[RMDB]
RNA sequence: GGGAACGACUCGAGUAGAGUCGAAAAUCACGAUCCAGUGCACGUACAGUCCGCCGACCGCGUCGGGGUCAUCGACGACGAGUGCCAGUUCGGCUGCGCCCGCGGGCGACGACCACGUCAACGGUGGCAAAUAGUAGCAUUUCGAUGCUACUAUUUGAAAAGAAACAACAACAACAAC
Reactivity to DMS in 0.01 (KOAc 150mM, MgCl2 10mM, bicine 150mM(pH8.5), 24C), signal-to-noise 9, nucleotides 027 to 126: u000c060a100c080g010a100u010c050c050a090g010u000g010c100a060c080g010u000a090c140a110g000u000c040c040g020c030c020g000a060c040c040g010c190g000u000c020g010g000g010g010u000c020a040u000c010g010a060c020g000a110c010g010a040g010u000g010c290c020a030g010u000u010c150g000g000c010u000g010c300g000c010c010c010g020c030g000g000g010c010g010a010c040g000a030c010c010a040c010g010u000c040a080a100c040g000g010u000g000g010
Reactivity to 2A3 in 0.01 (KOAc 150mM, MgCl2 10mM, bicine 150mM(pH8.5), 24C), signal-to-noise 9, nucleotides 027 to 126: u070c010a010c060g040a040u050c030c030a050g020u030g070c060a010c100g070u140a060c030a060g070u010c010c020g000c010c010g100a070c010c030g060c040g030u030c010g010g020g010g010u010c010a030u020c010g030a030c010g100a100c010g020a040g030u110g070c090c000a010g000u080u110c110g180g010c040u020g010c040g010c010c000c000g010c020g030g110g060c000g000a000c010g000a010c000c010a030c010g020u020c020a080a060c030g020g010u010g020g000